[RMDB]
RNA sequence: GGGAACGACUCGAGUAGAGUCGAAAAGCGGUAAUACCGGCGGCUCGAGUGGUGGCCGAUAUUAUUGAGUCUAAAGGGUCCGUAGCCGGCUUUGCAAGUCCCCUGGGAAAUCCAGCGGCUUAACCGUUGACUAGUACUUGUUCGCAAGUACUAGUCAAAAAGAAACAACAACAACAAC
Reactivity to 2A3 in 0.01 (KOAc 150mM, MgCl2 10mM, bicine 150mM(pH8.5), 24C), signal-to-noise 7, nucleotides 027 to 126: g030c010g000g020u030a040a020u020a070c010c010g000g000c010g040g000c010u020c020g120a130g060u280g060g010u060g100g000c000c000g010a000u000a020u060u030a050u020u090g050a040g040u020c040u130a070a060a100g050g020g000u030c030c050g040u050a020g000c010c010g020g000c000u070u070u080g030c020a030a020g060u090c010c010c000c010u020g010g000g050a050a180a050u090c010c000a010g000c010g000g000c000u050u050a060a040c020c010g020u010
Reactivity to DMS in 0.01 (KOAc 150mM, MgCl2 10mM, bicine 150mM(pH8.5), 24C), signal-to-noise 3, nucleotides 027 to 126: g010c020g010g000u000a050a020u010a060c020c000g000g030c050g000g000c030u000c060g000a170g030u030g010g040u000g000g010c000c000g010a060u010a010u020u010a030u020u020g000a070g010u020c070u010a080a100a140g000g030g010u000c030c080g000u010a070g000c030c010g010g010c020u000u000u020g010c090a070a120g010u020c020c020c010c020u010g010g000g020a100a080a110u040c020c030a040g010c170g000g000c020u010u020a080a060c060c040g020u020
An RNA of 177 nucleotides, treated with 2A3 and DMS and read out base by base. For 2A3, 7,565 sequencing reads were counted. The DMS profile rests on 6,848 reads. Values cover nucleotides 27 to 126.